The data come from the RNA Mapping Database (RMDB), library RFM100. The record gives the reactivity of an RNA of 177 nucleotides to 2A3. The 2A3 profile rests on 422 reads. Reactivities are given for positions 27 through 126. The RNA was probed in 150 mM KOAc, 10 mM MgCl2 and 150 mM bicine (pH 8.5) at 24 C.

RNA sequence: GGGAACGACUCGAGUAGAGUCGAAAACCUAUGGCUUAGAUUGAUGACCUCCAUUGCACUUUGGAGGGGUGCCUGCCUAAAGUCUGCCCAAGUGGUCGAGCCUACACUAUAAUUUGUGAUAGUGGGGGAGCCGUACCGUUUUCGAACGGUACGGCUCAAAAGAAACAACAACAACAAC
Reactivity to 2A3 in 0.01 (KOAc 150mM, MgCl2 10mM, bicine 150mM(pH8.5), 24C), signal-to-noise 1, nucleotides 027 to 126: c000c000u050a110u070g000g000c070u050u000a020g000a180u030u100g030a070u090g040a000c000c000u000c010c010a020u030u220g070c200a230c190u130u010u050g000g030a020g000g000g030g020u060g040c000c000u000g010c000c020u020a040a040a040g000u000c020u080g000c010c040c030a000a010g030u080g020g040u130c020g020a020g000c000c000u080a120c000a000c000u000a000u020a010a300u000u120u130g110u030g070a010u010a010g000u020g000g040g000g000